[RMDB]
RNA sequence: GGGAACGACUCGAGUAGAGUCGAAAACGUCGUGAACUAGCGACAAUGCCGUAGAUCGAUCGUUAUCUAACCGAAACAUCGUGACUAGUCGUAGAAUAGAACCAGGAGGGGGCGCUGUCAAACAAAGACUGGGUCUCAGAUUCGUCUGAGGCCCAGUAAAAGAAACAACAACAACAAC
Reactivity to 2A3 in 0.01 (KOAc 150mM, MgCl2 10mM, bicine 150mM(pH8.5), 24C), signal-to-noise 3, nucleotides 027 to 126: c050g000u000c000g030u020g080a090a050c050u040a060g040c010g010a000c020a010a070u130g080c010c010g060u060a040g000a110u030c010g000a010u000c050g020u010u010a090u090c050u040a030a070c000c020g000a010a010a030c030a020u010c030g030u020g040a010c010u070a020g030u030c050g040u030a010g010a070a050u090a060g100a100a020c050c060a030g060g000a030g010g020g000g000g000c040g000c020u030g010u020c070a090a090a110c030a010a110a040g040
Reactivity to DMS in 0.01 (KOAc 150mM, MgCl2 10mM, bicine 150mM(pH8.5), 24C), signal-to-noise 5, nucleotides 027 to 126: c180g000u000c010g020u010g000a100a040c080u010a070g010c000g000a020c040a100a100u030g000c030c010g000u030a060g010a110u020c040g000a070u020c150g010u010u010a050u000c050u000a080a100c170c110g000a020a050a040c090a020u020c030g010u000g000a090c080u000a060g000u000c030g020u000a060g000a070a050u000a070g020a090a080c030c050a080g000g010a080g020g010g020g020g000c050g000c020u010g000u010c050a070a070a100c110a060a080a070g000
Notes:
Chemical mapping of a 177-nucleotide RNA with 2A3 and DMS. The RNA was probed in 150 mM KOAc, 10 mM MgCl2 and 150 mM bicine (pH 8.5) at 24 C. For 2A3 the reverse transcriptase was SuperScript II with manganese.